[RMDB]
RNA sequence: GGGAACGACUCGAGUAGAGUCGAAAAAAUGGAUACAAAACAUCUUUCUUUAGUCUCGAAACAACCGGCACAUCGGUAUUGAAACGUAUGUUAUCAACAAUUACUGGUAUUGAGUUAACAAAGAUAACACCAUUACUGUUUUCGAACAGUAAUGGUGAAAAGAAACAACAACAACAAC
Reactivity to DMS in 0.01 (KOAc 150mM, MgCl2 10mM, bicine 150mM(pH8.5), 24C), signal-to-noise 4, nucleotides 027 to 126: a080a010u000g000g000a080u010a100c150a080a070a090a130c120a040u000c020u000u000u000c050u000u000u010a100g000u000c010u000c020g000a070a080a090c180a080a050c020c010g020g010c090a020c190a050u000c040g010g000u000a080u000u000g010a050a050a050c080g000u010a040u010g010u000u000a090u000c020a030a040c080a030a010u000u000a040c080u010g010g010u000a100u010u000g010a070g010u000u000a030a030c210a050a060a050g000a070u010a080a130
Reactivity to 2A3 in 0.01 (KOAc 150mM, MgCl2 10mM, bicine 150mM(pH8.5), 24C), signal-to-noise 5, nucleotides 027 to 126: a000a000u190g030g000a100u130a120c090a030a120a040a030c030a030u020c030u010u040u000c010u020u090u040a090g020u010c010u010c040g050a090a070a070c030a040a010c030c010g050g010c100a050c030a250u150c030g040g030u080a130u030u110g030a050a040a010c040g070u110a060u210g050u030u040a120u070c010a010a120c010a050a050u110u080a090c070u080g100g020u010a050u060u110g040a030g020u020u020a020a000c020a040a070a010g050a040u060a040a000

This 177-nucleotide RNA was probed chemically with DMS and 2A3. For 2A3 the reverse transcriptase was SuperScript II with manganese. Conditions: 150 mM KOAc, 10 mM MgCl2 and 150 mM bicine (pH 8.5), 24 C.